[RMDB]
RNA sequence: GGGAACGACUCGAGUAGAGUCGAAAAGAUAUGGACUAUUGGGAGCUGCUGUAUCGGAAACGAUACACAGCGACGAUCAAUACAUGUCCUAAGUCAAAAUCGUAUUCUAGUUCGCUAGAAUACGAAAGAUCACGAAGAACUUCGGUUCUUCGUGAUCAAAAGAAACAACAACAACAAC
Reactivity to DMS in 0.01 (KOAc 150mM, MgCl2 10mM, bicine 150mM(pH8.5), 24C), signal-to-noise 1, nucleotides 027 to 126: g000a020u010a080u020g000g000a010c020u000a030u000u000g010g030g010a000g000c000u000g000c150u000g000u000a000u000c000g010g020a020a010a070c010g010a000u000a000c000a000c020a010g010c030g010a130c200g000a100u000c000a000a020u000a040c300a130u000g030u000c000c000u000a010a140g000u020c000a030a050a160a150u000c000g000u000a000u000u000c000u000a000g000u010u010c240g010c000u000a000g000a030a000u000a000c000g010a000a050a080